[RMDB]
RNA sequence: GGGAACGACUCGAGUAGAGUCGAAAAGGCAUCGAACAAGUCGUUCUGGAUCUGCCGCAGCACAUCCGUGAUUUGAGUGUCCGGGUGGCCCAGCGCCAGGGCGGCCCCGAUCGCGGCGUUGGCCUCGCGACGGCGAUUAGUUCGCUAAUCGCCGUCGAAAAGAAACAACAACAACAAC
Reactivity to 2A3 in 0.01 (KOAc 150mM, MgCl2 10mM, bicine 150mM(pH8.5), 24C), signal-to-noise 1, nucleotides 027 to 126: g030g000c000a230u010c020g030a060a000c010a020a040g000u010c000g000u000u030c000u020g000g020a090u010c010u020g090c060c030g070c090a090g010c040a050c010a230u070c020c020g050u140g110a050u070u260u250g300a300g170u200g010u060c020c030g010g000g010u020g060g000c010c010c000a030g020c050g040c040c000a020g020g000g010c020g080g000c060c040c000c010g020a050u030c030g030c010g030g000c060g030u050u110g030g040c000c040u060c060g000
Reactivity to DMS in 0.01 (KOAc 150mM, MgCl2 10mM, bicine 150mM(pH8.5), 24C), signal-to-noise 1, nucleotides 027 to 126: g020g000c000a060u020c020g010a060a110c190a150a070g000u000c020g020u000u000c010u010g000g000a080u030c020u000g020c100c080g000c080a120g040c050a120c030a020u030c000c020g010u030g010a010u000u000u020g030a180g020u010g010u000c020c020g000g000g020u000g000g000c030c020c000a010g020c050g010c040c010a060g000g000g020c010g000g040c010c040c120c070g000a090u000c070g020c050g000g020c050g010u010u010g000g020c080c000u020c080g020